[RMDB]
RNA sequence: GGGAACGACUCGAGUAGAGUCGAAAAGAUAUGGACUUCUCGAGAACCACGACGACGUAGGCUCGGAAACGAGCCUACAUCAGUGGACGAGAGAGUCCUAAGUCAAAAGUUGUCCUUCGGGACAACAGCUACUACGUUAGUUCGCUAACGUAGUAGCAAAAGAAACAACAACAACAAC
Reactivity to 2A3 in 0.01 (KOAc 150mM, MgCl2 10mM, bicine 150mM(pH8.5), 24C), signal-to-noise 5, nucleotides 027 to 126: g020a010u060a020u130g000g000a000c020u150u030c010u100c020g120a180g100a300a300c020c000a020c020g300a110c070g000a000c030g060u000a000g000g000c000u000c010g010g010a040a040a010c010g000a000g000c000c010u000a000c000a000u000c000a000g000u010g000g030a040c050g020a010g000a020g070a010g010u010c000c000u000a040a010g020u000c040a020a030a070a230g010u010u000g000u000c020c000u040u110c300g130g000g000a000c010a000a000c000a000
Reactivity to DMS in 0.01 (KOAc 150mM, MgCl2 10mM, bicine 150mM(pH8.5), 24C), signal-to-noise 6, nucleotides 027 to 126: g000a030u000a240u000g000g000a020c000u010u000c000u000c000g020a300g010a130a240c010c000a010c000g000a070c300g000a000c030g010u000a020g000g010c000u000c000g000g000a030a030a060c000g000a020g030c000c000u000a000c000a000u000c000a040g020u000g000g010a170c040g000a090g010a080g010a040g010u000c000c010u010a000a080g000u000c030a100a090a180a150g010u000u000g000u000c000c000u000u010c270g050g010g000a020c000a010a000c010a090